RNA sequence: GGGAACGACUCGAGUAGAGUCGAAAACUUAUUGAAUUGCUCAUUCAAUGAGCAUUCUCAAUAUUAUGCCUUGAAGAGGACUCGAACCUCCACGCUUUUUAGCACGAGAUUUUGAGUCUCGCGUGUCGGCCAGAGAGUGCUUCGGCACUCUCUGGCCAAAAGAAACAACAACAACAAC
Reactivity to 2A3 in 0.01 (KOAc 150mM, MgCl2 10mM, bicine 150mM(pH8.5), 24C), signal-to-noise 2, nucleotides 027 to 126: c000u010u010a000u000u010g000a040a000u040u020g000c000u000c000a010u270u100c190a000a300u090g000a000g030c000a000u020u060c010u000c030a000a000u000a010u090u170a040u300g070c020c000u090u100g100a300a190g060a060g060g050a010c020u020c010g010a000a000c000c000u000c080c000a130c030g020c000u050u100u030u130u300a000g000c000a020c080g000a050g020a090u000u120u180u300g010a010g000u020c000u000c000g030c000g040u120g020u180c060